[RMDB]
An RNA of 177 nucleotides, treated with 2A3 and DMS and read out base by base. The DMS profile rests on 4,236 reads. For 2A3, 5,077 sequencing reads were counted. For 2A3 the reverse transcriptase was SuperScript II with manganese.
RNA sequence: GGGAACGACUCGAGUAGAGUCGAAAAGAGGAAGGCUCGUCCGCUCAGGGUUAGUCGGGACCUAAGCCGAGGCUGAAAAGCGUAGGCGAUGGACAACAGGUUGAUAUUCCUGUACCACCUAUACAUCACAUGUCGAUCAAUUCGUUGAUCGACAUGUAAAAGAAACAACAACAACAAC
Reactivity to 2A3 in 0.01 (KOAc 150mM, MgCl2 10mM, bicine 150mM(pH8.5), 24C), signal-to-noise 3, nucleotides 027 to 126: g150a020g060g060a110a040g040g000c010u020c040g030u010c020c010g010c080u110c130a040g090g000g000u040u060a000g020u040c010g030g020g030a050c000c000u050a090a000g000c000c000g010a040g080g000c010u020g030a030a060a010a000g010c010g000u030a010g000g000c000g010a010u020g000g000a010c010a040a010c000a060g000g020u050u070g080a070u040a120u180u090c000c010u010g000u030a050c020c020a060c020c010u080a070u040a130c060a050u090c030
Reactivity to DMS in 0.01 (KOAc 150mM, MgCl2 10mM, bicine 150mM(pH8.5), 24C), signal-to-noise 5, nucleotides 027 to 126: g020a090g000g010a170a130g010g000c030u010c050g020u000c020c050g000c110u010c170a160g020g000g010u000u000a050g010u000c050g010g000g010a170c030c020u000a080a270g020c000c020g000a210g000g000c010u000g000a110a070a110a030g020c010g000u010a300g000g010c020g000a110u020g000g000a100c100a120a040c030a010g000g010u000u000g000a130u000a190u020u010c010c000u000g000u010a110c040c030a070c090c020u000a110u010a100c160a060u010c070